[RMDB]
RNA sequence: GGGAACGACUCGAGUAGAGUCGAAAACAUUGUUCUGAUCAUCUGAAGAUCAGCUACUAGAAGAGAAAGAUCAGUUAAGUCCUUUGGACCUGAUCAGCUUGAUACAAGAACUACUGAUUUCAACUUCAAAACGGGUGCUACUUCGGUAGCACCCGAAGUGUCUUAGGAGGUUCGCCUCCUAAGACACAAAAGAAACAACAACAACAAC
Reactivity to 2A3 in 0.01 (KOAc 150mM, MgCl2 10mM, bicine 150mM(pH8.5), 24C), signal-to-noise 1, nucleotides 027 to 156: c060a080u140u170g010u040u040c010u010g010a000u000c010a030u010c100u110g110a170a040g000a030u000c000a020g060c000u050a020c050u040a140g080a110a010g090a050g000a010a190a000g000a020u000c000a000g020u060u250a140a000g000u060c020c000u030u080u210g120g000a020c040c100u060g000a060u020c020a020g030c000u000u010g040a030u070a130c010a070a040g020a100a020c050u060a020c000u140g020a100u000u020u080c070a100a130c000u100u060c060a030a100a100a000c010g000g020g000u000g000c000u000a020c000u000u000c120g130g000u030a000g000c060a000c000c000c000g000a000a000
The record gives the reactivity of an RNA of 207 nucleotides to 2A3.
For 2A3, 573 sequencing reads were counted.
The data come from the RNA Mapping Database (RMDB), library M2RFPK.